[RMDB]
RNA sequence: GGGAACGACUCGAGUAGAGUCGAAAAACUAUUUGUUCUAUAGCAAACAAACCCGAAACACAGGAUAUAUUUGUUAUAUAUGCUUUGUGGGACACAGCUGUUAGGACUUGAGCCAUCAGGGUCCAAAACGGUAUAGCCUAUUCGUAGGCUAUACCGUAAAAGAAACAACAACAACAAC
Reactivity to DMS in 0.01 (KOAc 150mM, MgCl2 10mM, bicine 150mM(pH8.5), 24C), signal-to-noise 3, nucleotides 027 to 126: a070c100u000a140u020u010u000g010u000u000c090u010a080u000a040g010c030a090a090a050c130a030a080a090c040c020c010g000a100a090a150c020a020c050a040g000g000a020u000a010u010a030u010u000u070g000u040u010a050u000a010u010a010u000g000c060u000u020u030g010u000g000g000g050a080c080a050c170a100g000c050u000g020u010u000a100g010g010a030c050u010u010g000a090g000c080c090a050u010c020a100g000g000g000u020c030c030a050a050a070
Reactivity to 2A3 in 0.01 (KOAc 150mM, MgCl2 10mM, bicine 150mM(pH8.5), 24C), signal-to-noise 4, nucleotides 027 to 126: a000c080u110a100u100u050u060g060u020u040c040u030a060u070a100g030c070a050a000a120c010a040a110a050c030c010c010g070a030a150a000c030a000c010a010g010g010a000u000a000u000a010u050u100u120g140u300u020a010u000a000u010a000u070g140c030u010u080u030g040u030g020g000g040a010c040a000c010a050g020c010u010g020u070u040a010g000g000a000c000u040u110g040a020g030c010c000a020u020c050a070g120g000g010u010c010c000a070a000a000